[RMDB]
RNA sequence: GGGAACGACUCGAGUAGAGUCGAAAAGAUAUGGAAUCACUCCCUCGCUAGGAGAGCUGUCGGAAACGACAGUUACCUCCUUGGACCGAGGGAGGUGAUUCCUAAGUCAAAGUGGCGUUCGCGCCACGUCAAAGCCCAGCUUCGGCUGGGCUUUGACAAAAGAAACAACAACAACAAC
Reactivity to DMS in 0.01 (KOAc 150mM, MgCl2 10mM, bicine 150mM(pH8.5), 24C), signal-to-noise 1, nucleotides 027 to 126: g010a020u010a300u010g000g000a010a000u000c000a100c000u000c010c000c000u010c010g000c110u000a040g000g010a040g100a010g020c000u000g000u010c000g000g000a140a120a270c030g030a040c010a000g000u000u010a100c300c010u010c000c000u000u000g030g020a120c300c000g020a020g020g000g010a010g020g030u000g020a050u000u000c000c000u020a010a070g010u000c040a070a030a190g020u000g020g040c020g000u000u010c280g040c000g010c000c000a010c000